[RMDB]
RNA sequence: GGGAACGACUCGAGUAGAGUCGAAAAAGAACUAGCGAUUGUAAAAGGCUGUUUGCGCUAAGAUAUGGAAUUAGCGCAAAUAGGUCCGAAUUCCUUGAUAACAUUUCGGACUACCGCGCUAAAACAAGAACGCAUGGGAAUUCGUUCCCAUGCGUUCAAAAGAAACAACAACAACAAC
Reactivity to 2A3 in 0.01 (KOAc 150mM, MgCl2 10mM, bicine 150mM(pH8.5), 24C), signal-to-noise 1, nucleotides 027 to 126: a020g070a030a020c010u000a000g040c020g060a100u040u250g080u110a030a180a000a050g140g000c000u000g010u000u000u020g000c000g000c000u010a020a050g040a080u280a200u300g110g000a080a090u010u000a010g010c010g000c000a000a000a000u000a000g000g010u020c010c000g030a060a040u080u020c030c010u000u170g170a040u120a160a020c040a130u050u050u030c010g030g000a010c010u000a110c000c020g060c000g100c020u040a090a040a000a030c080a070a100